[RMDB]
RNA sequence: GGGAACGACUCGAGUAGAGUCGAAAAUUUGGAGUAGGUUAUUCCCACUCUUGCAGGAAACGCUGACCGUACUGGUCGGCUACCAGCAGAGCGGCGUAAACCUGAUCUGGCGUCGCGCCGCCAGGCAUCCUCCGUAUCCUUUCGAGGAUACGGAGGAAAAAGAAACAACAACAACAAC
Reactivity to 2A3 in 0.01 (KOAc 150mM, MgCl2 10mM, bicine 150mM(pH8.5), 24C), signal-to-noise 1, nucleotides 027 to 126: u140u090u200g040g050a100g060u170a030g090g080u060u050a090u210u050c020c010c000a020c010u010c010u070u190g000c030a020g000g000a150a000a040c120g020c000u000g000a000c000c000g070u190a170c150u240g020g000u010c000g000g000c010u000a020c000c000a000g000c020a000g020a010g010c030g020g000c060g040u020a050a020a040c000c010u020g040a100u000c000u020g000g030c010g000u060c060g000c060g000c070c010g030c000c020a000g000g020c000a090
Reactivity to DMS in 0.01 (KOAc 150mM, MgCl2 10mM, bicine 150mM(pH8.5), 24C), signal-to-noise 3, nucleotides 027 to 126: u010u000u010g000g000a110g020u000a020g000g020u000u000a210u010u010c140c000c010a080c010u000c000u000u000g040c020a050g010g000a080a070a180c270g020c010u000g020a010c000c000g010u010a120c220u000g000g000u000c000g030g020c000u000a030c000c000a050g030c000a030g000a020g020c140g010g020c270g030u000a080a060a050c000c010u000g000a070u010c000u000g020g000c000g010u000c120g010c130g020c190c000g030c000c020a040g000g010c220a150